The record gives the reactivity of an RNA of 177 nucleotides to DMS and 2A3. 2A3 adducts were read by reverse transcription with SuperScript II with manganese. As a SHAPE reagent, 2A3 marks flexible, mostly unpaired nucleotides at the ribose 2'-OH. DMS adducts were read by reverse transcription with MarathonRT. The RNA was probed in 150 mM KOAc, 10 mM MgCl2 and 150 mM bicine (pH 8.5) at 24 C.

RNA sequence: GGGAACGACUCGAGUAGAGUCGAAAAGAAAGCGGAAUCCAACGACCAGCCAGAAGAUGCCGCAUCAGGUGAAAAGAAACACCUGAUCAAAGAAAACGCGUGAUGCUGGUCAACACGCGAAAGAAAACAUAUGGGUAGUCUUCGGACUACCCAUAUGAAAAGAAACAACAACAACAAC
Reactivity to DMS in 0.01 (KOAc 150mM, MgCl2 10mM, bicine 150mM(pH8.5), 24C), signal-to-noise 4, nucleotides 027 to 126: g000a070a080a120g020c020g000g010a080a060u010c030c060a110a100c110g000a030c000c010a010g020c030c120a180g030a110a130g000a060u010g000c000c010g000c010a080u000c000a010g010g030u010g000a030a080a110a190g020a130a150a070c000a000c000c000u000g000a000u000c140a080a060a160g010a080a050a100a110c000g010c000g030u000g010a110u010g000c030u030g000g000u020c010a070a100c010a010c000g010c000g000a110a110a070g020a090a040a050a180
Reactivity to 2A3 in 0.01 (KOAc 150mM, MgCl2 10mM, bicine 150mM(pH8.5), 24C), signal-to-noise 4, nucleotides 027 to 126: g060a030a060a000g010c000g000g040a060a060u040c070c020a030a020c010g010a000c000c010a010g020c020c060a090g020a130a020g070a120u090g060c010c000g000c010a000u010c000a000g010g000u030g040a160a120a110a120g130a030a140a020c020a000c000c000u010g000a010u010c020a020a120a020g140a070a060a020a010c010g010c000g000u000g020a040u060g000c020u030g000g010u030c000a010a010c000a000c000g000c010g050a040a050a000g060a000a070a000a010